This 177-nucleotide RNA was probed chemically with DMS and 2A3.
RNA sequence: GGGAACGACUCGAGUAGAGUCGAAAAAAGUGAGAAACCACCUUCUGUCUACAGAAGGCAACAAUCCUGAAUAAACCUGGAAAUCUUUGUCUGACUUCAGACAGCUGAGUCUAAUCGUUGCCUUCCUAAGAGAACUAAGGUUCGCCUUAGUUCUCUUAAAAGAAACAACAACAACAAC
Reactivity to DMS in 0.01 (KOAc 150mM, MgCl2 10mM, bicine 150mM(pH8.5), 24C), signal-to-noise 5, nucleotides 027 to 126: a050a050g000u020g000a100g010a080a080a130c150c060a080c010c020u010u000c010u000g000u010c060u040a110c200a130g010a040a010g010g020c020a010a020c060a120a130u000c020c030u000g000a080a090u010a060a080a090c180c050u000g010g020a070a130a090u010c040u010u020u010g000u000c010u000g010a220c190u010u040c050a010g010a040c020a030g010c090u000g000a060g000u000c070u010a060a090u020c100g020u000u000g000c020c000u010u010c010c100u000
Reactivity to 2A3 in 0.01 (KOAc 150mM, MgCl2 10mM, bicine 150mM(pH8.5), 24C), signal-to-noise 6, nucleotides 027 to 126: a000a000g150u130g000a090g080a120a060a010c030c010a020c030c000u000u020c010u020g210u010c030u030a040c050a100g000a000a000g000g010c000a000a000c000a010a050u050c010c020u060g060a080a110u180a190a090a050c020c040u030g020g020a020a090a150u030c020u020u090u030g050u000c020u020g090a300c060u160u100c190a030g010a050c000a040g100c050u040g030a010g060u050c050u120a050a100u100c060g010u000u000g000c000c000u000u000c000c010u010